[RMDB]
RNA sequence: GGGAACGACUCGAGUAGAGUCGAAAACUUCCGCGCUCAGGUUCAUCCCGAUUACUUCGCGACGAUUCUGAAGGCGCUAGGAACCUACUACAACACCGCGUUAAUCGCGCCAGAGCGCAACAAUCACGGUGCACAUACUCUUCGGAGUAUGUGCACCAAAAGAAACAACAACAACAAC
Reactivity to 2A3 in 0.01 (KOAc 150mM, MgCl2 10mM, bicine 150mM(pH8.5), 24C), signal-to-noise 2, nucleotides 027 to 126: c000u050u000c000c010g000c000g040c000u000c000a030g000g010u030u050c020a030u030c080c010c000g000a000u010u170a240c170u070u090c020g010c000g030a080c050g140a170u030u040c050u020g110a150a070g000g000c010g010c030u020a020g020g020a050a030c000c030u070a090c050u050a040c120a190a060c040a030c040c020g000c000g000u030u080a070a040u080c070g000c000g070c000c030a050g040a100g000c050g050c000a040a000c020a040a030u160c090a000c240

Source information: Chemical mapping of a 177-nucleotide RNA with 2A3. The reactions ran in a buffer of 150 mM KOAc, 10 mM MgCl2 and 150 mM bicine (pH 8.5), at 24 C. Source: RMDB library OK1LIB, as collected in RNAgym.